Source: RMDB library TTRDEL, as collected in RNAgym. This 177-nucleotide RNA was probed chemically with DMS.

RNA sequence: GGGAACGACUCGAGUAGAGUCGAAAAGAUAUGGAGCAGGACAUGCCUCAUGUUCGGAAACGAACAGGAAGGCAACAGCCUGGCUCCUAAGUCAAAAGACUGUCAUUACUUCGGUAAUGACAGUCAAGCUAUCAGGGGUGUUCGCACCCCUGAUAGCAAAAGAAACAACAACAACAAC
Reactivity to DMS in 0.01 (KOAc 150mM, MgCl2 10mM, bicine 150mM(pH8.5), 24C), signal-to-noise 2, nucleotides 027 to 126: g010a060u010a300u000g000g000a010g030c000a010g000g010a090c040a210u010g000c010c000u010c020a080u010g010u000u010c010g000g000a070a050a220c010g000a010a020c000a010g000g020a070a050g020g010c000a050a050c210a150g010c000c000u020g060g020c010u000c000c000u000a040a070g020u000c100a090a080a090a200g000a010c000u000g030u000c000a000u000u000a000c000u010u030c140g020g000u000a000a000u000g000a000c000a010g000u000c000a010a040

The RNA was probed in 150 mM KOAc, 10 mM MgCl2 and 150 mM bicine (pH 8.5) at 24 C. Values cover nucleotides 27 to 126. For DMS the reverse transcriptase was MarathonRT.